[RMDB]
RNA sequence: GGGAACGACUCGAGUAGAGUCGAAAAUAGUGUCAUCAUGGAAGAGUGUGGUAUGCCUCAGUGGCUUAUCCGGCUGUACCAUUUGGGGAGGUCAGCACUGGACAUUGCAGGCCCUCGAAAGAGCUCCGCGAGAUAUAUAGUUCGCUAUAUAUCUCGCAAAAGAAACAACAACAACAAC
Reactivity to DMS in 0.01 (KOAc 150mM, MgCl2 10mM, bicine 150mM(pH8.5), 24C), signal-to-noise 7, nucleotides 027 to 126: u010a070g010u000g010u010c030a050u000c070a060u000g020g010a080a070g010a070g020u000g020u000g010g010u000a050u010g010c020c020u010c130a070g020u010g010g010c080u010u010a090u010c040c050g010g000c030u000g000u010a060c030c010a090u000u010u010g000g010g010g010a120g000g000u000c020a050g000c020a050c070u010g010g010a050c060a060u010u000g010c130a080g010g010c020c090c000u000c050g010a060a100a120g000a100g000c080u000c100c170
Reactivity to 2A3 in 0.01 (KOAc 150mM, MgCl2 10mM, bicine 150mM(pH8.5), 24C), signal-to-noise 4, nucleotides 027 to 126: u100a000g060u010g010u030c020a050u010c020a020u110g070g040a120a050g050a070g070u080g020u090g040g050u080a040u100g010c000c000u040c030a070g030u060g100g000c000u070u070a050u050c010c020g020g000c010u020g050u110a030c020c000a040u060u090u190g020g000g000g000a060g000g020u030c020a010g010c010a030c070u080g020g010a030c010a040u030u070g010c020a020g000g040c000c020c000u000c010g030a060a060a040g040a020g010c030u050c070c050
Description: Chemical mapping of a 177-nucleotide RNA with DMS and 2A3. The reactions ran in a buffer of 150 mM KOAc, 10 mM MgCl2 and 150 mM bicine (pH 8.5), at 24 C. For 2A3 the reverse transcriptase was SuperScript II with manganese. The data come from the RNA Mapping Database (RMDB), library OK2TRN. DMS adducts were read by reverse transcription with MarathonRT.